An RNA of 177 nucleotides, treated with DMS and 2A3 and read out base by base. For 2A3, 3,641 sequencing reads were counted. 2A3 is a SHAPE reagent: it acylates the 2'-hydroxyl of flexible nucleotides of all four kinds.

RNA sequence: GGGAACGACUCGAGUAGAGUCGAAAAAGGGUCAGGUUGGUCACGUGGCUUGCCGGAGGCCACCAGCUCUGAUUUCUGCUUCGGAGCUGGCCCCCAGGCGCUAGUGAGAAUGAUCUAACUGAGGGUAGAUUAGUAGGAUCUUCGGAUCCUACUAAUCAAAAGAAACAACAACAACAAC
Reactivity to DMS in 0.01 (KOAc 150mM, MgCl2 10mM, bicine 150mM(pH8.5), 24C), signal-to-noise 5, nucleotides 027 to 126: a100g000g010g010u000c030a080g010g020u000u000g000g010u000c020a050c050g010u010g010g010c010u010u000g040c020c010g000g010a060g000g010c040c120a160c070c050a010g000c010u000c000u000g000a020u000u010u010c210u010g010c210u000u000c010g010g010a010g010c000u000g010g000c070c020c000c010c000a080g030g010c050g000c040u000a080g010u010g010a110g000a150a100u000g000a050u000c010u000a070a110c030u000g010a080g010g000g010u010a180
Reactivity to 2A3 in 0.01 (KOAc 150mM, MgCl2 10mM, bicine 150mM(pH8.5), 24C), signal-to-noise 3, nucleotides 027 to 126: a020g070g010g010u050c030a020g040g080u110u130g080g040u070c010a010c090g100u120g050g010c020u060u180g010c020c010g000g020a080g000g020c030c010a010c020c000a010g000c000u010c000u000g030a020u040u170u170c180u250g200c080u030u000c000g010g000a000g000c010u000g000g000c030c000c000c000c000a080g010g000c020g010c060u030a020g050u010g050a050g060a080a090u070g010a030u020c020u040a040a070c030u050g060a060g080g040g030u080a070
The reactions ran in a buffer of 150 mM KOAc, 10 mM MgCl2 and 150 mM bicine (pH 8.5), at 24 C.